[RMDB]
RNA sequence: GGGAACGACUCGAGUAGAGUCGAAAAAGCGGCCCGGCUGGUGGCCGCCAAGUGCACACUGGCAGCCCGUGUGGACAGUUUCCACGAGAGCACAGAAGGGAAGGUGGGCUACGAACUGAAGGAUGAGGACGCUAUCAUACUUCGGUAUGAUAGCGUCAAAAGAAACAACAACAACAAC
Reactivity to 2A3 in 0.01 (KOAc 150mM, MgCl2 10mM, bicine 150mM(pH8.5), 24C), signal-to-noise 2, nucleotides 027 to 126: a000g000c000g010g060c010c000c110g010g020c110u110g100g090u200g080g000c000c020g000c010c010a140a060g120u170g020c040a000c000a000c060u050g020g000c010a020g060c030c020c010g020u020g010u050g020g030a020c020a160g050u000u140u010c000c010a040c030g140a100g010a010g030c000a020c020a070g120a090a060g000g010g000a030a000g030g120u140g000g030g010c010u020a040c060g080a090a020c010u130g020a070a010g020g030a090u110g030a020g170
Reactivity to DMS in 0.01 (KOAc 150mM, MgCl2 10mM, bicine 150mM(pH8.5), 24C), signal-to-noise 1, nucleotides 027 to 126: a110g040c000g000g000c100c010c040g000g040c010u040g020g070u040g010g000c010c010g040c000c140a000a000g000u000g000c100a160c040a160c000u000g030g030c100a040g000c010c000c130g030u010g040u030g000g000a010c100a140g040u000u000u030c010c000a180c030g000a060g000a190g000c000a080c040a030g000a240a130g020g000g020a090a110g000g020u050g020g000g000c060u000a150c180g000a060a000c050u000g000a190a070g000g040a070u030g000a180g000